[RMDB]
Notes: The data come from the RNA Mapping Database (RMDB), library OK2TST. This 177-nucleotide RNA was probed chemically with DMS and 2A3. 2A3 adducts were read by reverse transcription with SuperScript II with manganese. The RNA was probed in 150 mM KOAc, 10 mM MgCl2 and 150 mM bicine (pH 8.5) at 24 C.
RNA sequence: GGGAACGACUCGAGUAGAGUCGAAAACAUGCUAAGCGAGGGGCAACUUGAAACCUGCAGAUCUAGAAGCUUACAAAUAAAAUGUCUCUCACCUAAGACCUCUCAGCAAGAGAGUGUCAACUGCAGGAUAAUUGAUCGAUUUCGAUCGAUCAAUUAUAAAAGAAACAACAACAACAAC
Reactivity to DMS in 0.01 (KOAc 150mM, MgCl2 10mM, bicine 150mM(pH8.5), 24C), signal-to-noise 4, nucleotides 027 to 126: c080a130u000g010c140u010a020a020g010c030g050a120g010g010g000g010c050a040a130c120u000u000g000a040a100a260c010c010u000g000c000a010g000a170u010c100u000a090g020a250a220g010c030u010u000a050c070a070a070a120u030a060a070a090a080u010g020u000c040u000c000u000c040a110c150c080u000a060a110g010a010c000c000u000c010u000c000a150g020c270a090a140g010a010g000a010g010u010g020u010c020a060a070c010u000g000c000a010g000g010
Reactivity to 2A3 in 0.01 (KOAc 150mM, MgCl2 10mM, bicine 150mM(pH8.5), 24C), signal-to-noise 4, nucleotides 027 to 126: c030a040u150g000c020u060a000a050g010c020g040a020g020g000g010g000c000a090a020c050u070u200g120a120a070a040c010c000u000g000c000a000g000a090u050c020u090a060g030a190a010g140c010u060u070a050c090a060a160a040u180a080a130a050a040u060g020u000c000u000c000u000c030a050c000c040u060a090a030g010a000c000c000u020c000u000c000a090g060c070a260a030g010a000g000a000g020u190g010u000c000a010a020c010u000g000c000a000g010g010